[RMDB]
RNA sequence: GGGAACGACUCGAGUAGAGUCGAAAAGCAAUAAUGACUCGUUGUUUAGCUAUUCAUUCUUGUUUUAUAGAACGUGUGGAUUGGGAUAUAGAGUAUCCUUAUAUCUCACAUGAAAAGAAAUUGAAUUUAUAUUGUAAAGGUUCGCCUUUACAAUAUAAAAAGAAACAACAACAACAAC
Reactivity to DMS in 0.01 (KOAc 150mM, MgCl2 10mM, bicine 150mM(pH8.5), 24C), signal-to-noise 2, nucleotides 027 to 126: g000c010a030a010u010a060a020u000g010a030c090u000c180g010u000u000g040u010u010u020a080g010c040u000a050u000u000c010a030u010u000c060u000u010g000u000u000u000u030a130u010a110g000a090a120c030g030u000g010u000g000g000a020u000u000g000g000g010a010u000a040u000a130g010a190g020u000a000u000c000c000u010u000a060u010a090u010c020u010c010a000c010a010u000g000a080a080a110a070g000a030a060a070u010u000g000a080a080u000u000
Reactivity to 2A3 in 0.01 (KOAc 150mM, MgCl2 10mM, bicine 150mM(pH8.5), 24C), signal-to-noise 2, nucleotides 027 to 126: g000c000a040a050u070a080a020u040g010a000c010u000c030g000u000u030g110u120u200u160a010g020c000u020a020u010u020c010a000u000u010c020u020u000g070u090u060u020u060a160u030a060g110a160a030c000g000u020g000u010g010g020a000u000u080g010g000g010a000u020a000u010a120g210a030g180u010a000u010c010c000u070u030a110u010a000u020c020u000c040a000c000a010u030g010a030a070a030a020g040a020a160a080u060u050g000a000a000u020u030